[RMDB]
RNA sequence: GGGAACGACUCGAGUAGAGUCGAAAAACUUACGUUUACAGAUUAUUUUAAUGUGGUUAAGCUGACACCAGCUUGCCCCACGCGGGUAGCGUUCUGCAUGACAUGCUCUCGCUGACGGCGAUCAUGCUACUGGGAGAAGAUUCGUCUUCUCCCAGUAAAAAGAAACAACAACAACAAC
Reactivity to 2A3 in 0.01 (KOAc 150mM, MgCl2 10mM, bicine 150mM(pH8.5), 24C), signal-to-noise 3, nucleotides 027 to 126: a000c060u120u090a030c070g060u070u040u080a090c070a020g070a120u060u070a090u080u300u040u150a200a080u130g010u050g060g020u060u160a010a000g000c000u010g060a060c030a080c130c050a010g000c000u000u040g040c000c020c000c020a030c020g030c030g030g000g080u080a050g060c020g040u060u000c040u060g090c060a060u070g040a050c010a040u050g000c020u000c020u000c030g000c070u100g070a060c090g070g010c030g040a130u300c010a000u040g000c020
Reactivity to DMS in 0.01 (KOAc 150mM, MgCl2 10mM, bicine 150mM(pH8.5), 24C), signal-to-noise 6, nucleotides 027 to 126: a040c030u010u010a090c160g010u010u000u000a100c120a240g000a080u010u010a070u020u010u000u010a060a100u010g000u010g020g010u000u000a010a020g010c000u000g010a170c300a140c300c020a020g020c000u000u000g020c030c030c020c040a060c090g000c040g010g000g020u000a050g010c030g010u000u000c040u000g000c050a050u000g000a100c120a070u000g000c010u000c060u000c030g010c050u000g020a060c190g010g020c050g010a070u000c020a030u000g000c060

Structure probing data (2A3 and DMS) for a 177-nucleotide construct. The RNA was probed in 150 mM KOAc, 10 mM MgCl2 and 150 mM bicine (pH 8.5) at 24 C. For DMS, 5,512 sequencing reads were counted. Values cover nucleotides 27 to 126.